[RMDB]
RNA sequence: GGGAACGACUCGAGUAGAGUCGAAAACCGUAGGAGCGUUGGAGGACGAUGUUGUCAGUCGGAUUUCCAACGGUUCGAAAGAGCGGUUGGCCGGUCGACUUGGAUUUACAUCGUUGAAGACGCUCCUAAACGGAAAACGCCACGUUCGCGUGGCGAACAUCCUUAGUGUGUUCGCACACUAAGGAUGAAAAGAAACAACAACAACAAC
Reactivity to 2A3 in 0.01 (KOAc 150mM, MgCl2 10mM, bicine 150mM(pH8.5), 24C), signal-to-noise 2, nucleotides 027 to 156: c010c000g000u010a020g000g020a010g000c000g000u020u030g090g030a160g110g250a000c000g000a000u000g010u000u010g020u010c010a000g000u010c040g090g020a060u080u060u050c010c000a010a000c000g000g000u000u000c000g010a030a060a010g000a010g000c200g040g000u000u000g010g020c090c040g120g030u060c000g010a000c000u030u190g160g020a030u250u190u090a020c000a010u000c000g000u000u040g000a010a000g010a000c000g000c000u010c000c000u000a000a000a000c000g030g010a020a030a050a040c030g000c000c020a010c010g020u040u060c170g010c010g140u000g000g000c000g000a000a010
Reactivity to DMS in 0.01 (KOAc 150mM, MgCl2 10mM, bicine 150mM(pH8.5), 24C), signal-to-noise 2, nucleotides 027 to 156: c000c020g010u000a100g000g000a010g050c020g000u000u010g000g020a300g000g000a040c000g010a000u010g030u000u000g010u000c040a080g030u010c010g030g010a050u000u000u000c000c000a020a000c000g000g030u000u000c010g020a180a130a300g010a020g030c010g010g040u010u000g010g010c070c030g000g040u000c000g030a040c010u000u000g040g020a080u000u000u000a040c020a060u000c020g020u000u010g010a300a300g010a030c010g030c020u000c000c000u000a000a020a060c010g020g010a080a070a120a150c010g020c000c010a010c000g020u000u010c300g050c040g040u010g000g000c000g040a060a090
Source information: An RNA of 207 nucleotides, treated with 2A3 and DMS and read out base by base. Reactivities are given for positions 27 through 156. For DMS the reverse transcriptase was MarathonRT. It was measured as part of the RMDB library RNAMAK.